[RMDB]
RNA sequence: GGGAACGACUCGAGUAGAGUCGAAAAUCCCCAUAGUUCGCUAUGGGGAAAAGCCGUACCGCGUAGCACGCGGAUAGGAGCGAAGAUAUCCACGGCACGCCAAAACCUUCGCCUUCGGGCGAAGGAAUCUAAUGGCUUAGUUCGCUAAGCCAUUAGAAAAAGAAACAACAACAACAAC
Reactivity to 2A3 in 0.01 (KOAc 150mM, MgCl2 10mM, bicine 150mM(pH8.5), 24C), signal-to-noise 5, nucleotides 027 to 126: u010c010c000c000c000a010u010a000g010u030u050c210g020c110u010a000u000g020g000g000g010a000a040a040a010g010c000c010g010u060a090c010c030g000c010g030u030a060g080c170a020c130g000c010g010g010a000u090a030g030g000a020g030c060g110a130a050g040a220u120a080u150c010c000a000c000g000g010c010a010c070g110c020c010a030a070a080a130c000c000u000u000c000g010c000c000u030u090c240g100g000g000c000g000a000a000g000g000a000a010
Reactivity to DMS in 0.01 (KOAc 150mM, MgCl2 10mM, bicine 150mM(pH8.5), 24C), signal-to-noise 5, nucleotides 027 to 126: u010c000c000c010c000a010u010a000g020u000u000c240g030c010u000a000u000g010g000g000g010a000a010a030a080g000c000c010g020u010a150c070c050g020c010g030u010a120g030c070a300c010g020c010g000g000a130u000a030g000g010a100g010c110g010a090a100g020a110u000a070u000c010c030a040c010g000g020c010a150c070g010c030c130a050a070a100a120c000c000u000u000c000g000c000c010u000u020c170g030g010g010c000g000a000a000g010g000a010a020